[RMDB]
RNA sequence: GGGAACGACUCGAGUAGAGUCGAAAAUUUUGAUCCAGUCAGUACCAGAGAAGCACCUUGAAGAGUCGCAGUAGAAAUAGUAAACUUCAGUGAUUCUUUUUCCUGAUUUGCUAUCCCGUGCUGGUGCGCCACCAGUAAAUUUCGAUUUACUGGUGGCAAAAGAAACAACAACAACAAC
Reactivity to 2A3 in 0.01 (KOAc 150mM, MgCl2 10mM, bicine 150mM(pH8.5), 24C), signal-to-noise 5, nucleotides 027 to 126: u100u090u040u130g030a030u030c010c010a010g060u050c030a030g010u040a050c020c010a020g020a010g010a120a000g010c000a020c000c020u050u130g040a070a030g020a020g060u060c020g000c010a010g010u080a010g100a020a090a010u110a040g070u130a090a120a090c050u040u040c040a020g010u040g110a070u040u020c000u080u080u010u070u060c020c020u050g050a160u060u010u130g010c000u020a070u130c010c020c020g010u040g010c000u030g000g030u010g010c020
Reactivity to DMS in 0.01 (KOAc 150mM, MgCl2 10mM, bicine 150mM(pH8.5), 24C), signal-to-noise 4, nucleotides 027 to 126: u010u010u000u010g010a120u030c010c050a070g010u000c080a070g000u000a060c080c040a110g010a120g020a070a120g010c020a020c120c040u020u020g020a060a040g000a020g030u000c020g050c010a060g020u000a060g010a030a080a060u000a120g010u020a090a090a110c070u010u000c030a030g050u030g020a010u000u000c050u030u010u010u010u000c080c010u000g000a020u030u010u000g020c040u000a060u000c010c010c150g010u020g020c010u010g010g000u000g000c090
Record summary:
An RNA of 177 nucleotides, treated with 2A3 and DMS and read out base by base. For 2A3 the reverse transcriptase was SuperScript II with manganese. The reactions ran in a buffer of 150 mM KOAc, 10 mM MgCl2 and 150 mM bicine (pH 8.5), at 24 C.